The record gives the reactivity of an RNA of 170 nucleotides to 2A3 and DMS. The reactions ran in a buffer of 150 mM KOAc, 10 mM MgCl2 and 150 mM bicine (pH 8.5), at 24 C. For DMS the reverse transcriptase was MarathonRT. Source: RMDB library 15KLIB, as collected in RNAgym. The DMS profile rests on 7,405 reads.

RNA sequence: GGGAACGACUCGAGUAGAGUCGAAAACAACUGUUAUCUUGCCACUGCAUUGUUAACACUCCAACAAAUAGAGUUGAAGUUUAAUCCACCUGCUCUACAAAGGGCUGGUGAAGCUGCUCACUUUUGUCACCACUCCCCUUCGGGGGAGUGAAAAGAAACAACAACAACAAC
Reactivity to 2A3 in 0.01 (KOAc 150mM, MgCl2 10mM, bicine 150mM(pH8.5), 24C), signal-to-noise 5, nucleotides 027 to 129: c000a000a020c050u050g000u090u060a090u070c040u040u050g020c040c100a240c140u160g000c040a010u120u070g030u060u030a050a000c020a010c030u030c040c010a060a010c020a040a100a080u150a050g030a000g050u080u140g170a130a020g020u100u140u140a090a060u040c050c000a010c000c000u010g020c000u030c010u030a030c120a070a150a080g000g000g000c000u000g000g010u000g000a000a000g010c030u040g000c000u010c020a140c030u000u040u010u050g070u020c030a000c060
Reactivity to DMS in 0.01 (KOAc 150mM, MgCl2 10mM, bicine 150mM(pH8.5), 24C), signal-to-noise 4, nucleotides 027 to 129: c040a100a150c090u000g010u010u010a040u040c010u020u030g030c050c140a100c130u070g020c000a070u060u090g000u000u000a010a070c130a030c120u000c020c020a160a070c080a040a110a080u070a100g040a180g050u050u030g000a070a050g000u040u000u060a080a060u040c160c010a040c010c030u050g010c000u030c030u000a180c300a100a060a000g090g000g010c000u020g070g010u010g000a060a030g050c010u050g020c000u020c040a110c030u010u030u020u010g040u010c150a110c160